[RMDB]
An RNA of 207 nucleotides, treated with 2A3 and DMS and read out base by base.
For DMS, 4,562 sequencing reads were counted.
The 2A3 profile rests on 3,849 reads.
Conditions: 150 mM KOAc, 10 mM MgCl2 and 150 mM bicine (pH 8.5), 24 C.
It was measured as part of the RMDB library PDB130.

RNA sequence: GGGAACGACUCGAGUAGAGUCGAAAAGCGAAUCUCUGGUCCGACGGACAGAAAUCGCAUAUAAGGCUAGGCUUCGAGUGAUAAGCUGGCAAAGAACAGUGAAGUCUAAUAACUACCACGUUUGUAGAAGCAGAGUAAAUGCGGCGGAUAUAUGGAGCAUGUACACCUUGUUCGCAAGGUGUACAUGAAAAGAAACAACAACAACAAC
Reactivity to 2A3 in 0.01 (KOAc 150mM, MgCl2 10mM, bicine 150mM(pH8.5), 24C), signal-to-noise 6, nucleotides 027 to 156: g020c020g020a070a060u040c020u000c000u100g190g100u060c020c030g220a110c160g060g020a000c010a010g050a010a070a010u040c010g000c040a000u040a020u010a200a040g040g000c030u040a010g040g030c000u050u030c110g030a040g010u040g020a040u030a050a030g010c010u030g020g000c050a230a100a050g040a130a020c020a010g020u030g070a070a010g020u020c030u050a060a060u070a120a060c010u060a080c000c050a060c110g020u050u090u130g050u040a040g010a080a010g010c030a020g020a040g080u080a040a120a100u070g000c000g020g000c020g020g010a010u030a000u000a030u180g060g010a020g010
Reactivity to DMS in 0.01 (KOAc 150mM, MgCl2 10mM, bicine 150mM(pH8.5), 24C), signal-to-noise 3, nucleotides 027 to 156: g030c010g000a090a080u000c050u000c010u000g030g010u000c020c000g000a180c220g000g000a150c020a060g010a020a030a030u000c010g040c000a160u000a100u000a100a160g000g030c040u000a070g020g010c020u010u000c030g000a100g040u010g020a100u000a060a170g010c020u010g000g020c060a040a100a190g020a060a080c020a050g000u010g010a110a070g030u000c050u010a040a090u010a050a070c050u000a070c030c010a050c050g030u000u010u000g000u000a120g010a080a100g000c010a080g000a070g000u000a030a060a030u000g010c030g010g040c010g000g000a100u000a080u010a080u000g010g020a090g020